[RMDB]
Source: RMDB library OK2TST, as collected in RNAgym. Structure probing data (DMS and 2A3) for a 177-nucleotide construct. The RNA was probed in 150 mM KOAc, 10 mM MgCl2 and 150 mM bicine (pH 8.5) at 24 C. Values cover nucleotides 27 to 126. The DMS profile rests on 6,153 reads.
RNA sequence: GGGAACGACUCGAGUAGAGUCGAAAAGCAGCGUUUACACAGGGCUGCCGGGCUUUCCUGGUGGAUGAGCUGGGCGGUUCAUGAGCCAGAACCACUCAGCAGCAUGUCAGUGUGCUUCCUGGGGAGCACUAGGGAGUGAGUUCGCUCACUCCCUAGUAAAAGAAACAACAACAACAAC
Reactivity to DMS in 0.01 (KOAc 150mM, MgCl2 10mM, bicine 150mM(pH8.5), 24C), signal-to-noise 5, nucleotides 027 to 126: g000c020a020g000c020g030u000u020u030a120c220a120c220a090g000g000g010c020u010g020c010c030g000g010g010c110u000u010u010c140c010u000g020g020u010g010g010a050u010g010a300g010c010u000g000g000g020c030g020g030u000u000c020a050u010g000a080g030c070c120a150g000a020a020c010c010a040c010u000c000a010g000c010a060g010c030a020u000g000u010c090a080g010u000g020u000g000c030u000u000c020c020u000g020g010g010g010a190g020c150
Reactivity to 2A3 in 0.01 (KOAc 150mM, MgCl2 10mM, bicine 150mM(pH8.5), 24C), signal-to-noise 2, nucleotides 027 to 126: g020c010a000g020c110g070u090u170u190a110c160a040c030a070g050g040g060c010u000g040c010c010g070g020g030c060u120u120u110c020c000u050g090g000u050g090g060a120u070g060a030g040c000u000g010g030g040c020g000g010u000u020c020a070u180g100a020g060c050c010a040g000a010a000c000c020a000c000u000c000a010g010c000a010g040c010a020u070g050u190c060a050g030u010g020u050g200c000u060u060c010c000u040g000g000g000g000a020g030c040